RNA sequence: GGGAACGACUCGAGUAGAGUCGAAAAUGGUAUUCUACGUUGUAUUUUCUAGCAAUACAACAAAUUUAUCAUACGAAUAAGGGAGAACCUAGAAAUCCAGUGUUUCGGGUUUAUUUCGAGCGGAAAGACUUAUAAUUAUCUUCGGAUAAUUAUAAGUAAAAGAAACAACAACAACAAC
Reactivity to 2A3 in 0.01 (KOAc 150mM, MgCl2 10mM, bicine 150mM(pH8.5), 24C), signal-to-noise 7, nucleotides 027 to 126: u030g000g010u030a050u030u040c040u070a050c120g000u000u000g010u000a020u010u040u030u090c120u100a070g080c070a000a010u000a010c000a000a000c000a010a030a000u050u050u020a050u020c020a010u030a140c060g050a190a070u070a150a060g040g020g000a140g030a060a020c010c020u040a120g010a020a040a010u030c040c060a080g060u060g060u180u010u000c000g000g030g000u020u020u030a110u060u200u030c020g000a040g040c040g030g070a100a040a020g050
Reactivity to DMS in 0.01 (KOAc 150mM, MgCl2 10mM, bicine 150mM(pH8.5), 24C), signal-to-noise 6, nucleotides 027 to 126: u000g000g000u000a060u010u010c060u010a090c200g010u000u000g010u000a010u000u000u010u030c150u020a120g010c160a030a000u000a000c000a010a010c010a060a110a080u020u000u000a030u010c040a060u010a130c120g000a090a060u020a070a120g000g000g000a110g000a050a070c040c040u000a050g020a010a030a240u010c010c100a090g010u020g020u000u000u000c000g000g000g000u000u000u000a010u000u020u000c020g010a060g000c050g000g000a090a100a100g000
The record gives the reactivity of an RNA of 177 nucleotides to 2A3 and DMS. 2A3 adducts were read by reverse transcription with SuperScript II with manganese. Values cover nucleotides 27 to 126. Conditions: 150 mM KOAc, 10 mM MgCl2 and 150 mM bicine (pH 8.5), 24 C. It was measured as part of the RMDB libraries RFM100 and RFMREP.